[RMDB]
This 170-nucleotide RNA was probed chemically with DMS and 2A3.
For 2A3, 35,476 sequencing reads were counted.
The reactions ran in a buffer of 150 mM KOAc, 10 mM MgCl2 and 150 mM bicine (pH 8.5), at 24 C.
High 2A3 reactivity points to a flexible backbone, as in loops and unpaired stretches.
It was measured as part of the RMDB library 15KLIB.
For DMS the reverse transcriptase was MarathonRT.
RNA sequence: GGGAACGACUCGAGUAGAGUCGAAAAUAAAUGCACAUCUGUGGUUCUCCUCUCUGUGCUCCAACAGUUACACUUAGAGGCUAAUAGUAGGGCCUGGGCUUUCUGUGUUAAAUGCCAUAAUGAUAUAUACGAACAGGGUUCGCCCUGUUCAAAAGAAACAACAACAACAAC
Reactivity to DMS in 0.01 (KOAc 150mM, MgCl2 10mM, bicine 150mM(pH8.5), 24C), signal-to-noise 9, nucleotides 027 to 129: u010a050a130a070u000g000c040a040c060a060u050c090u010g050u030g040g020u010u020c060u000c010c020u000c020u040c040u060g010u030g030c080u030c040c030a050a030c120a110g000u050u030a120c060a060c070u010u020a030g030a050g020g030c170u040a060a060u040a110g050u030a030g010g010g030c040c020u000g000g010g000c050u010u030u010c070u000g030u040g020u030u040a020a040a040u050g030c000c030a070u000a050a080u020g030a040u000a080u040a080u030a100c220
Reactivity to 2A3 in 0.01 (KOAc 150mM, MgCl2 10mM, bicine 150mM(pH8.5), 24C), signal-to-noise 9, nucleotides 027 to 129: u120a000a070a030u130g030c030a030c000a100u070c070u080g060u050g060g010u040u000c040u020c010c010u000c010u000c000u010g030u020g040c050u050c050c020a050a040c010a090g070u100u100a020c030a030c040u030u060a020g010a020g040g020c020u070a100a060u070a190g150u040a040g010g000g050c000c010u030g030g010g000c000u050u140u030c040u090g050u000g030u080u110a060a110a030u130g030c010c010a050u090a130a060u130g060a010u020a020u040a010u020a220c090